About this RNA
Structure probing data (DMS and 2A3) for a 177-nucleotide construct.
[RMDB]
RNA sequence: GGGAACGACUCGAGUAGAGUCGAAAAUAACUAACAACUGUUUUCGUCCUUAAACCAACGAUAACGGCUGUUAGGCCAUGUUUUGUAAGGGCUGUUAGGAGCGCUGUUAAGGAGUGUUAACGGUGAGACUUGUAUAACCGUUCGCGGUUAUACAAGUAAAAGAAACAACAACAACAAC
Reactivity to DMS in 0.01 (KOAc 150mM, MgCl2 10mM, bicine 150mM(pH8.5), 24C), signal-to-noise 7, nucleotides 027 to 126: u040a110a200c020u000a010a010c020a010a030c010u010g000u000u000u010u000c020g000u010c110c080u010u020a070a100a150c280c300a110a010c000g010a020u000a010a010c000g010g000c030u000g010u000u000a020g010g000c040c040a090u020g010u000u010u000u010g000u010a050a080g000g010g010c010u010g000u010u010a070g010g010a090g010c040g000c020u000g000u000u010a050a050g010g010a070g010u020g000u000u000a030a040c030g010g010u000g010a110g010
Reactivity to 2A3 in 0.01 (KOAc 150mM, MgCl2 10mM, bicine 150mM(pH8.5), 24C), signal-to-noise 9, nucleotides 027 to 126: u090a020a040c010u010a000a010c000a000a010c000u010g010u000u010u010u010c010g000u030c030c000u100u180a100a100a100c070c030a020a010c010g010a010u020a040a000c010g010g000c000u010g010u060u020a020g010g000c010c000a130u110g080u020u070u020u040g090u050a060a060g030g020g000c020u030g040u060u050a060g030g060a060g030c020g000c010u020g010u040u030a070a030g100g050a090g080u140g020u080u040a030a010c010g000g010u020g020a080g030
The data come from the RNA Mapping Database (RMDB), libraries RFM100 and RFMREP.
2A3 adducts were read by reverse transcription with SuperScript II with manganese.